[RMDB]
RNA sequence: GGGAACGACUCGAGUAGAGUCGAAAAAGAGCCUACUGUGAAAUCACUGCUCCAUAUUUGCCAGUGGAGGAAAUGGGCAUAGAGUAGAGAAUAGCUUCAUAUGUUUACACGUUUGCAUAGACUACACUACGUCUACCACUUUCGAGUGGUAGACGUAAAAAGAAACAACAACAACAAC
Reactivity to DMS in 0.01 (KOAc 150mM, MgCl2 10mM, bicine 150mM(pH8.5), 24C), signal-to-noise 2, nucleotides 027 to 126: a120g020a130g020c040c010u000a010c120u020g010u000g000a060a100a070u010c030a050c090u000g000c040u000c010c000a080u000a100u010u000u020g020c060c010a170g020u000g000g000a070g000g000a030a060a080u000g000g000g010c030a070u000a080g010a090g010u000a050g030a120g020a030a130u000a120g000c020u000u000c070a070u000a020u000g000u000u000u000a080c120a060c130g010u000u000u000g020c070a080u010a080g040a090c090u000a050c100a110c090
Reactivity to 2A3 in 0.01 (KOAc 150mM, MgCl2 10mM, bicine 150mM(pH8.5), 24C), signal-to-noise 1, nucleotides 027 to 126: a000g070a010g010c040c000u000a050c060u060g020u050g080a060a030a120u110c020a030c070u000g020c000u130c050c000a100u090a130u150u100u100g100c060c000a030g020u030g070g060a040g010g000a100a060a070u140g010g020g000c000a000u030a000g100a060g050u120a010g050a060g060a080a130u120a070g000c030u100u020c000a060u010a000u110g050u060u170u150a020c080a000c060g020u100u230u000g000c030a050u020a150g000a020c050u030a040c110a000c070